[RMDB]
RNA sequence: GGGAACGACUCGAGUAGAGUCGAAAAGGACUUAGGUUCGCCUAAGUCCAAAUAACGUCAACAAGUACGGUAGACGAAGAUAACGUACAGUACAGAAGUACAAAAGGAGAGACUUCGGUCUCUCCAAGAUUAAGAAGAUGUUCGCAUCUUCUUAAUCAAAAGAAACAACAACAACAAC
Reactivity to 2A3 in 0.01 (KOAc 150mM, MgCl2 10mM, bicine 150mM(pH8.5), 24C), signal-to-noise 9, nucleotides 027 to 126: g000g000a000c000u010u010a000g000g020u040u050c130g080c020c000u000a000a000g000u000c000c000a000a000a000u010a010a000c020g050u020c040a020a030c020a140a220g080u050a020c040g040g060u070a060g030a100c080g100a110a040g060a130u110a100a020c030g010u020a010c030a040g010u020a010c010a060g200a260a030g130u020a030c030a050a130a040a030g010g000a010g000a000g000a000c010u030u040c190g040g000u010c000u000c000u000c000c000a000a000
Reactivity to DMS in 0.01 (KOAc 150mM, MgCl2 10mM, bicine 150mM(pH8.5), 24C), signal-to-noise 8, nucleotides 027 to 126: g000g010a020c000u000u000a000g010g010u000u010c260g020c000c000u000a000a000g000u000c000c000a020a020a040u010a070a160c090g010u000c050a140a100c160a090a090g010u000a020c040g000g010u010a080g010a070c050g010a130a090g000a100u010a040a060c040g010u000a020c040a120g000u000a030c040a140g010a060a110g010u010a020c050a080a050a110a110g010g000a010g010a010g000a010c000u000u010c190g020g000u000c000u000c000u000c000c000a010a020
The data come from the RNA Mapping Database (RMDB), library M2PK50.
This 177-nucleotide RNA was probed chemically with 2A3 and DMS.
The reactions ran in a buffer of 150 mM KOAc, 10 mM MgCl2 and 150 mM bicine (pH 8.5), at 24 C.